[RMDB]
RNA sequence: GGGAACGACUCGAGUAGAGUCGAAAAGAAAGAAAGAAAGGUAUGCCUGGCUCCCUGUAUGCCAUAUGCUGAGCCCAUCGAGUAUCGAUGACCUCCGUGGAUGGCGUAUGAGGAGCCAUGCAUAUAAUGGACUUCACGUGUUCGCACGUGAAGUCCAAAAAGAAACAACAACAACAAC
Reactivity to 2A3 in 0.01 (KOAc 150mM, MgCl2 10mM, bicine 150mM(pH8.5), 24C), signal-to-noise 1, nucleotides 027 to 126: g090a020a020a000g130a040a150a030g140a080a080a000g200g000u000a000u000g050c000c000u000g010g000c000u020c000c010c000u000g000u000a010u000g000c000c000a020u000a020u050g000c000u000g000a000g040c010c020c030a000u000c000g050a110g240u220a170u300c000g000a000u000g000a020c010c000u000c000c020g020u040g070g030a000u000g000g040c030g000u000a000u000g050a020g010g000a000g000c000c000a000u000g000c000a030u000a000u020a000a050

Conditions: 150 mM KOAc, 10 mM MgCl2 and 150 mM bicine (pH 8.5), 24 C. Structure probing data (2A3) for a 177-nucleotide construct. For 2A3 the reverse transcriptase was SuperScript II with manganese.